[RMDB]
RNA sequence: GGGAACGACUCGAGUAGAGUCGAAAAGAUAUGGAAAUCGUGGGAGCUUAAUGGUCGGAAACGACCAGAGCGAGGAUCAAUUUCCUAAGUCAAAACCAUACCAUUAAGUUCGCUUAAUGGUAUGGAAUCCUGGGUUAAUGUUCGCAUUAACCCAGGAAAAAGAAACAACAACAACAAC
Reactivity to DMS in 0.01 (KOAc 150mM, MgCl2 10mM, bicine 150mM(pH8.5), 24C), signal-to-noise 2, nucleotides 027 to 126: g010a010u000a230u000g000g000a000a010a000u000c060g010u000g000g010g010a290g000c010u000u000a070a060u010g030g000u000c000g020g000a050a070a170c000g020a010c010c000a020g000a020g000c010g010a140g000g010a090u000c010a040a020u000u000u000c010c000u000a050a150g020u000c040a070a060a070a140c010c000a030u000a000c010c000a000u000u000a000a000g020u010u020c300g000c000u000u000a000a020u000g000g000u000a000u000g000g000a040a060
Reactivity to 2A3 in 0.01 (KOAc 150mM, MgCl2 10mM, bicine 150mM(pH8.5), 24C), signal-to-noise 1, nucleotides 027 to 126: g020a000u050a010u080g000g060a000a010a000u060c190g100u060g020g100g070a120g000c010u000u100a230a090u240g000g000u000c020g020g000a050a010a050c010g000a000c020c000a000g000a000g000c010g000a140g040g050a020u030c000a030a020u020u020u020c000c000u010a130a000g030u010c050a000a010a070a120c010c000a000u000a000c000c010a010u000u020a010a000g020u020u140c230g030c200u000u000a000a010u000g030g000u010a000u010g000g000a010a020